[RMDB]
Structure probing data (DMS and 2A3) for a 177-nucleotide construct. Values cover nucleotides 27 to 126. The DMS profile rests on 20,522 reads. The 2A3 profile rests on 20,127 reads.
RNA sequence: GGGAACGACUCGAGUAGAGUCGAAAAGACGCGGGCCGUCGCGGUGGCGCCAGUGCUGCGCGUGCACAAUGUUGUUGGCGGUCAAUGCACUCCACCGCUGGCGCAUCGUGGGGUUGAUCGCCCGGAAGGUAGUACUAUGAUUCGUCAUAGUACUACCAAAAGAAACAACAACAACAAC
Reactivity to DMS in 0.01 (KOAc 150mM, MgCl2 10mM, bicine 150mM(pH8.5), 24C), signal-to-noise 8, nucleotides 027 to 126: g010a100c100g020c060g010g010g000c010c030g010u000c030g020c010g010g020u000g010g020c120g020c010c020a030g010u000g010c160u000g000c110g020c100g020u000g010c010a070c160a110a110u010g000u000u000g010u000u000g010g010c030g020g000u000c070a050a080u000g010c070a050c030u000c030c020a030c080c040g000c000u000g000g010c010g020c020a030u000c040g020u000g000g000g000g000u000u000g000a090u000c090g000c000c040c020g000g010a110a100
Reactivity to 2A3 in 0.01 (KOAc 150mM, MgCl2 10mM, bicine 150mM(pH8.5), 24C), signal-to-noise 5, nucleotides 027 to 126: g060a010c060g010c030g110g030g000c020c020g110u110c030g010c010g020g030u010g090g060c010g000c000c010a000g000u020g020c020u030g010c020g010c020g030u020g010c010a040c030a110a270u150g030u110u030g080u030u070g140g020c050g000g020u080c030a030a070u090g010c020a020c030u020c000c010a020c010c010g000c010u010g000g000c000g010c010a010u030c010g010u020g000g030g010g000u050u120g050a100u100c040g010c010c000c000g020g020a090a020